Notes:
An RNA of 207 nucleotides, treated with DMS and 2A3 and read out base by base. Source: RMDB library RNAMAK, as collected in RNAgym. The reactions ran in a buffer of 150 mM KOAc, 10 mM MgCl2 and 150 mM bicine (pH 8.5), at 24 C. For DMS the reverse transcriptase was MarathonRT. Values cover nucleotides 27 to 156.

[RMDB]
RNA sequence: GGGAACGACUCGAGUAGAGUCGAAAACGCUGGGCAGGGCUGCGAGGGUCCAACAGCCUCUGAAGCGCGCACGGAGGACAUGGUGAAAGCCGCAGCCUGCCUGUGCUGAAGCGCGCACGGCAACCGAAAGGUGCGAAAAUACCAGUUCGCUGGUAAAUAUUCACAAAAACUUCGGUUUUUGUGAAUAAAAAGAAACAACAACAACAAC
Reactivity to DMS in 0.01 (KOAc 150mM, MgCl2 10mM, bicine 150mM(pH8.5), 24C), signal-to-noise 1, nucleotides 027 to 156: c000g060c010u010g040g010g010c010a080g040g000g040c010u000g030c000g000a180g010g010g000u010c020c010a090a030c000a090g000c000c000u000c020u010g030a090a060g000c010g010c040g030c010a300c000g020g040a030g040g030a050c080a130u010g010g000u000g020a120a100a190g070c090c050g000c010a080g010c010c000u000g000c030c000u000g030u000g000c000u000g020a070a080g070c010g000c060g030c020a300c040g010g000c000a040a060c020c030g000a110a040a160g000g030u000g010c020g000a070a030a110a120u000a100c000c010a070g010u000u000c140g050c030u000g010g010u020a020a050a130
Reactivity to 2A3 in 0.01 (KOAc 150mM, MgCl2 10mM, bicine 150mM(pH8.5), 24C), signal-to-noise 4, nucleotides 027 to 156: c020g020c020u030g020g000g000c020a060g100g100g110c010u000g000c020g050a230g120g100g080u100c040c030a080a090c070a090g050c010c010u000c010u020g120a220a080g000c000g010c000g000c010a010c000g020g010a000g020g020a080c080a210u300g020g040u190g100a190a160a030g120c030c000g000c000a000g000c000c000u000g000c000c000u000g000u000g000c020u020g020a130a060g000c010g000c000g000c000a000c000g020g000c000a020a030c010c000g040a070a020a030g010g000u010g000c010g000a130a010a000a010u060a010c010c000a000g000u010u070c200g040c080u010g000g010u020a000a030a000